[RMDB]
RNA sequence: GGGAACGACUCGAGUAGAGUCGAAAAAUAUCCUCUAACUCCAUACUGCACAAGUAAUCACACCAAGCAUGAGGAAUAUGUGGCUUAACUUCCUCAUCGUACGCCACGUUGCCCUGUAAGAGGACUGCACCGGAUAUCGAUUCGUCGAUAUCCGGUGAAAAGAAACAACAACAACAAC
Reactivity to 2A3 in 0.01 (KOAc 150mM, MgCl2 10mM, bicine 150mM(pH8.5), 24C), signal-to-noise 5, nucleotides 027 to 126: a000u160a090u030c010c010u000c010u030a080a060c010u000c040c010a050u090a130c010u040g070c030a060c040a140a060g060u080a130a080u110c020a040c020a030c100c030a030a020g030c000a060u070g010a010g030g060a020a010u120a060u190g080u030g040g000c050u120u140a070a050c020u060u050c010c020u060c020a060u060c040g050u080a050c050g000c010c010a020c060g020u040u060g060c010c010c000u030g010u040a050a030g030a040g070g040a030c050u040g040
Reactivity to DMS in 0.01 (KOAc 150mM, MgCl2 10mM, bicine 150mM(pH8.5), 24C), signal-to-noise 3, nucleotides 027 to 126: a060u020a050u000c030c000u010c030u000a100a150c100u000c080c020a100u020a120c040u000g020c060a030c080a120a100g010u020a060a100u020c080a100c060a160c080c050a040a070g030c120a020u010g000a050g020g000a030a120u050a140u030g020u010g010g000c000u000u010a090a060c160u030u000c020c030u010c040a020u000c110g020u000a030c160g000c030c020a010c000g000u020u030g010c030c000c000u000g020u010a070a040g010a080g000g000a060c180u020g030
Chemical mapping of a 177-nucleotide RNA with 2A3 and DMS.
The DMS profile rests on 4,669 reads.
For 2A3, 3,748 sequencing reads were counted.
Source: RMDB library OK1LIB, as collected in RNAgym.
The reactions ran in a buffer of 150 mM KOAc, 10 mM MgCl2 and 150 mM bicine (pH 8.5), at 24 C.